Chemical mapping of a 177-nucleotide RNA with DMS and 2A3. The data come from the RNA Mapping Database (RMDB), library TTRDES. The DMS profile rests on 4,458 reads. The reactions ran in a buffer of 150 mM KOAc, 10 mM MgCl2 and 150 mM bicine (pH 8.5), at 24 C. For 2A3 the reverse transcriptase was SuperScript II with manganese. For DMS the reverse transcriptase was MarathonRT. Values are in units of 0.01, from 0 to 300, in steps of 10.
RNA sequence: GGGAACGACUCGAGUAGAGUCGAAAAGAUAUGGAUCCUAGAGCGAUAAGUCCAGUAUCGGAAACGAUACGGACUUUUGACGCUCAAUGGAUCCUAAGUCAAAGAUGAGCGCUUCGGCGCUCAUCAACUACAGAUUAUCCUUCGGGAUAAUCUGUAGAAAAGAAACAACAACAACAAC
Reactivity to DMS in 0.01 (KOAc 150mM, MgCl2 10mM, bicine 150mM(pH8.5), 24C), signal-to-noise 4, nucleotides 027 to 126: g000a050u010a270u000g000g010a020u000c000c000u000a300g010a010g020c000g010a140u000a020a010g010u000c000c000a210g030u000a000u010c000g000g000a080a050a110c000g000a020u000a000c000g000g000a010c000u010u000u000u000g010a180c080g030c010u000c000a300a080u010g020g000a010u000c000c000u010a000a090g000u000c030a110a160a140g000a010u000g000a010g000c010g020c000u000u020c300g030g010c000g030c000u010c010a000u000c000a060a160
Reactivity to 2A3 in 0.01 (KOAc 150mM, MgCl2 10mM, bicine 150mM(pH8.5), 24C), signal-to-noise 2, nucleotides 027 to 126: g010a000u070a020u120g010g000a010u000c000c020u030a050g020a010g050c010g110a140u040a300a000g000u000c000c070a090g000u000a000u000c020g000g020a110a030a010c000g000a000u000a000c010g000g020a000c000u010u000u010u030g040a020c000g010c000u010c010a010a010u060g000g000a000u000c000c000u010a020a010g020u020c050a210a030a100g000a000u010g000a000g030c020g010c060u100u230c300g140g000c020g020c000u000c000a000u010c000a000a000